Source: RMDB library OK2TST, as collected in RNAgym.
Chemical mapping of a 177-nucleotide RNA with 2A3 and DMS.
The DMS profile rests on 595 reads.
For 2A3, 658 sequencing reads were counted.
Conditions: 150 mM KOAc, 10 mM MgCl2 and 150 mM bicine (pH 8.5), 24 C.
Values cover nucleotides 27 to 126.
High 2A3 reactivity points to a flexible backbone, as in loops and unpaired stretches.
2A3 adducts were read by reverse transcription with SuperScript II with manganese.

RNA sequence: GGGAACGACUCGAGUAGAGUCGAAAACGAACGAACCGCACUCCUUCGUAUACGUCAGGAGUCCAUUGAUGAGAAGGGGCUAGGGAGAGCUUGAACCCAAUUCCUACAGUGAUGAAUAUAAGCGCAAAGGUACACAGGGUUUCGACCCUGUGUACCUAAAAGAAACAACAACAACAAC
Reactivity to 2A3 in 0.01 (KOAc 150mM, MgCl2 10mM, bicine 150mM(pH8.5), 24C), signal-to-noise 1, nucleotides 027 to 126: c010g090a060a000c060g060a020a030c040c020g010c020a000c010u080c000c000u060u020c030g000u100a100u080a230c090g000u000c000a020g050g050a070g110u060c000c010a120u070u080g050a060u060g010a050g030a050a020g060g020g030g000c040u030a040g050g060g020a010g000a010g000c010u000u090g040a020a030c000c000c060a040a030u090u030c050c000u050a110c060a080g040u020g150a150u080g020a140a010u210a050u040a100a000g030c000g040c190a200a050
Reactivity to DMS in 0.01 (KOAc 150mM, MgCl2 10mM, bicine 150mM(pH8.5), 24C), signal-to-noise 1, nucleotides 027 to 126: c090g000a120a130c100g030a230a110c070c040g000c200a160c080u000c020c030u000u000c020g020u040a140u000a080c130g020u000c070a020g000g000a160g030u030c070c110a110u000u000g000a110u000g020a100g020a060a100g000g000g000g010c070u060a100g000g000g000a110g000a110g000c040u000u000g000a090a090c030c030c040a020a290u000u000c000c000u020a030c140a070g000u030g020a090u000g000a070a070u000a090u000a030a120g020c020g040c110a040a140